About this RNA:
Chemical mapping of a 207-nucleotide RNA with DMS and 2A3. The RNA was probed in 150 mM KOAc, 10 mM MgCl2 and 150 mM bicine (pH 8.5) at 24 C. Source: RMDB library M2RFPK, as collected in RNAgym. High 2A3 reactivity points to a flexible backbone, as in loops and unpaired stretches.
[RMDB]
RNA sequence: GGGAACGACUCGAGUAGAGUCGAAAAGUCCUGCCAUGAGACCGCACCGAGAGCAUGUCGCAUCGAAUGGACUCGGGGAGUCGGCAGCUUGCCCCACGGAUGAGCGCCUAAUGCCGGCAUUCGGGAAAAUAGACUGGAUAGUUCGCUAUCCAGUCAAGGGUGAUAUACAGUUCGCUGUAUAUCACCCAAAAGAAACAACAACAACAAC
Reactivity to DMS in 0.01 (KOAc 150mM, MgCl2 10mM, bicine 150mM(pH8.5), 24C), signal-to-noise 2, nucleotides 027 to 156: g020u000c010c020u000g020c040c020a090u010g010a150g000a030c000c050g020c020a100c020c040g020a110g010a140g030c020a090u010g010u000c010g000c090a120u000c110g020a100a170u000g010g010a120c040u000c020g020g000g050g010a110g020u000c040g000g010c000a040g020c040u000u000g000c040c020c020c040a170c040g000g020a040u000g010a090g050c110g010c040c040u000a130a110u000g010c000c020g030g000c000a140u010u000c040g000g000g000a070a110a090a230u000a140g000a020c000u010g000g010a000u000a020g010u000u010c300g020c020u000a040u000c000c020a000g000u000c000a020a070
Reactivity to 2A3 in 0.01 (KOAc 150mM, MgCl2 10mM, bicine 150mM(pH8.5), 24C), signal-to-noise 4, nucleotides 027 to 156: g030u050c000c000u000g010c000c010a140u140g140a050g010a160c030c020g040c060a080c000c030g020a010g000a020g060c020a050u100g110u250c030g010c110a150u170c150g040a030a020u030g040g120a050c000u000c010g030g000g010g010a200g020u030c020g000g000c000a010g000c020u040u060g090c000c000c010c020a050c030g000g010a070u040g020a020g160c040g050c040c090u190a200a050u170g060c070c030g020g030c020a010u030u020c000g000g010g060a020a060a020a120u140a040g000a000c000u000g000g000a000u000a000g020u020u010c040g000c150u000a000u000c000c000a000g000u000c000a000a000